[RMDB]
RNA sequence: GGGAACGACUCGAGUAGAGUCGAAAACAGCAAUUAUUCGUAAUUGCUGAAUGGCGGACCCUGCGCGGAAGGAGCGCGCAGGACUCCUUCGCCGCCUUUUAAUAAGCAGGUACUUCGGUACCUGCAAGCUUUAUGUACCAUUCGUGGUACAUAAAGCAAAAGAAACAACAACAACAAC
Reactivity to 2A3 in 0.01 (KOAc 150mM, MgCl2 10mM, bicine 150mM(pH8.5), 24C), signal-to-noise 7, nucleotides 027 to 126: c010a000g000c000a000a000u000u020a030u080u150c180g060u060a020a010u010u000g000c000u000g000a030a090u080g000g000c010g010g000a030c010c010c010u000g000c030g000c010g040g060a170a100g130g100a120g150c010g000c000g000c000a010g000g020a010c040u040c010c000u040u040c020g010c010c010g050c020c000u160u300u050u070a180a190u160a120a030g000c000a000g000g000u010a000c000u040u110c220g070g010u000a000c000c000u000g000c000a000a000
Reactivity to DMS in 0.01 (KOAc 150mM, MgCl2 10mM, bicine 150mM(pH8.5), 24C), signal-to-noise 4, nucleotides 027 to 126: c010a010g000c000a010a000u000u000a020u000u010c190g020u010a010a000u000u000g010c010u010g000a040a060u010g010g010c010g010g000a080c220c010c000u010g000c010g020c010g010g000a130a110g010g010a130g010c020g000c020g010c020a010g000g000a050c070u000c090c130u000u000c090g000c000c010g000c030c010u000u010u000u010a060a140u010a100a110g000c000a010g010g010u000a010c000u000u020c160g030g000u000a010c000c000u000g000c000a010a020

Description
Structure probing data (2A3 and DMS) for a 177-nucleotide construct. For 2A3, 15,672 sequencing reads were counted. Conditions: 150 mM KOAc, 10 mM MgCl2 and 150 mM bicine (pH 8.5), 24 C. For DMS the reverse transcriptase was MarathonRT. The data come from the RNA Mapping Database (RMDB), library M2PK50. 2A3 adducts were read by reverse transcription with SuperScript II with manganese.